[RMDB]
RNA sequence: GGGAACGACUCGAGUAGAGUCGAAAAGAACGUGGUAGCCACAUCGUCCUCCGUGAAGGUGACGACGUGGGUCUUGCCUCGCUUGUCCGACACGGUGAGCGAGAUCGCCGUCUUACCGCCCGGCAUCCUGCCGUGUAAGGUUCGCCUUACACGGCAGAAAAGAAACAACAACAACAAC
Reactivity to 2A3 in 0.01 (KOAc 150mM, MgCl2 10mM, bicine 150mM(pH8.5), 24C), signal-to-noise 7, nucleotides 027 to 126: g070a050a010c060g020u070g030g010u050a000g090c020c010a010c000a030u020c020g020u010c010c090u130c040c000g100u160g300a220a050g040g000u030g020a000c010g000a000c030g000u090g000g010g030u020c060u060u090g030c010c010u010c010g020c020u050u100g100u130c040c030g060a120c130a040c210g030g000u020g010a010g010c010g000a010g020a070u100c070g020c050c000g020u040c030u040u040a030c010c000g020c020c010c000g020g000c010a060u060c010
Reactivity to DMS in 0.01 (KOAc 150mM, MgCl2 10mM, bicine 150mM(pH8.5), 24C), signal-to-noise 2, nucleotides 027 to 126: g000a090a020c130g000u000g000g000u000a020g010c030c000a040c050a070u010c020g000u010c000c060u050c030c000g010u020g010a180a160g000g050u010g000a040c030g020a030c080g020u020g000g000g000u020c070u070u050g030c100c020u000c000g070c030u000u010g010u010c010c080g030a160c160a140c100g020g000u000g040a040g000c060g060a030g020a060u030c050g020c070c010g000u020c040u000u000a070c020c000g010c020c020c060g020g000c100a120u060c060
An RNA of 177 nucleotides, treated with 2A3 and DMS and read out base by base.
The 2A3 profile rests on 6,065 reads.